This 177-nucleotide RNA was probed chemically with DMS and 2A3. The 2A3 profile rests on 13,395 reads. It was measured as part of the RMDB library M2PK50.

[RMDB]
RNA sequence: GGGAACGACUCGAGUAGAGUCGAAAAUAUGGGCAGUUCGCUGCCCAUACGAGCGGAGUCCGGCACUAUGAGCCCGCAGCCUUGGUGCGUAGCCGCGGUGCAGAGACCAAGCCUUCGGGCUUGGUAACUUGAUACAGACAUUCGUGUCUGUAUCAAGAAAAGAAACAACAACAACAAC
Reactivity to DMS in 0.01 (KOAc 150mM, MgCl2 10mM, bicine 150mM(pH8.5), 24C), signal-to-noise 9, nucleotides 027 to 126: u000a010u000g000g000g010c000a010g010u000u010c220g010c000u000g000c000c000c000a000u000a010c070g010a130g010c020g000g000a120g000u000c020c020g010g000c020a020c030u000a040u000g000a150g020c010c040c140g030c150a140g000c020c020u000u000g010g010u000g000c020g010u000a160g000c010c020g010c040g010g010u010g020c140a100g000a140g000a040c000c000a000a000g000c000c000u000u010c190g020g010g010c000u010u000g000g010u000a010a040
Reactivity to 2A3 in 0.01 (KOAc 150mM, MgCl2 10mM, bicine 150mM(pH8.5), 24C), signal-to-noise 5, nucleotides 027 to 126: u090a000u000g000g000g000c000a000g020u050u080c170g070c120u000g000c000c000c000a000u000a000c010g010a020g000c020g020g020a020g050u020c040c000g030g030c010a010c030u070a060u110g060a040g040c040c050c080g110c090a030g000c000c010u030u090g040g000u050g000c020g020u030a030g020c000c010g010c050g000g030u130g010c070a050g040a010g030a180c000c000a000a000g010c010c000u050u060c200g080g000g020c000u000u000g000g000u010a000a010